[RMDB]
RNA sequence: GGGAACGACUCGAGUAGAGUCGAAAAAGAGCUGGUAGCUUACGGCCUAUAGUUCAUCAGGGGAAGGAGCUACCUGAGAUAGUGGCGUCGCCGCAACGUAGUCAAGCGACCGCUGAACUCGGCUGUGCCGUGUGGUAAUAUUCGUAUUACCACACGGAAAAGAAACAACAACAACAAC
Reactivity to DMS in 0.01 (KOAc 150mM, MgCl2 10mM, bicine 150mM(pH8.5), 24C), signal-to-noise 9, nucleotides 027 to 126: a090g010a070g020c040u000g010g010u000a040g000c020u000u000a080c040g010g010c010c000u010a120u010a100g010u000u000c120a140u010c110a100g010g000g010g010a140a140g000g000a060g010c020u000a050c010c010u000g010a070g010a110u010a070g020u010g010g030c060g010u000c040g020c010c030g010c290a100a060c090g010u010a100g010u000c050a240a140g010c020g000a040c060c080g020c010u000g010a050a080c030u000c180g010g010c050u000g020u010g010
Reactivity to 2A3 in 0.01 (KOAc 150mM, MgCl2 10mM, bicine 150mM(pH8.5), 24C), signal-to-noise 9, nucleotides 027 to 126: a000g070a010g000c040u050g000g070u050a010g000c000u040u040a090c020g070g010c010c010u130a140u140a180g110u080u130c050a120u040c040a100g000g020g020g050a080a100g050g030a030g010c010u030a050c000c000u010g000a030g010a030u130a050g110u070g090g030c060g020u030c010g010c010c010g010c040a050a080c100g270u250a110g070u100c040a060a000g010c010g020a020c070c100g010c020u020g010a050a030c010u020c040g040g000c040u070g040u070g100

Structure probing data (DMS and 2A3) for a 177-nucleotide construct. 2A3 adducts were read by reverse transcription with SuperScript II with manganese. The RNA was probed in 150 mM KOAc, 10 mM MgCl2 and 150 mM bicine (pH 8.5) at 24 C. It was measured as part of the RMDB library OK2TRN.